[RMDB]
RNA sequence: GGGAACGACUCGAGUAGAGUCGAAAAGAAGCUGUCUUCGGACAGCUUCGGUUUAUUUCGUGUAAUGGUCGAGUCGUUCCCAUGAUUACAUGAAAUAAUUUGCUGUCUGCGGAUUCGUCCGCAGAAAAGAGCUACUUCUAUUCGUAGAAGUAGCUCUAAAAGAAACAACAACAACAAC
Reactivity to DMS in 0.01 (KOAc 150mM, MgCl2 10mM, bicine 150mM(pH8.5), 24C), signal-to-noise 2, nucleotides 027 to 126: g000a010a020g000c000u000g010u010c000u000u010c200g010g010a010c000a000g010c000u000u000c000g000g020u000u000u000a060u000u000u000c000g030u000g000u000a110a100u000g000g000u010c000g020a020g010u000c000g040u000u000c000c000c000a000u000g000a080u000u010a030c140a050u010g000a080a100a130u010a050a070u000u000u000g010c110u000g000u000c000u000g010c000g000g000a020u000u010c190g010u000c000c000g020c000a010g000a000a020a070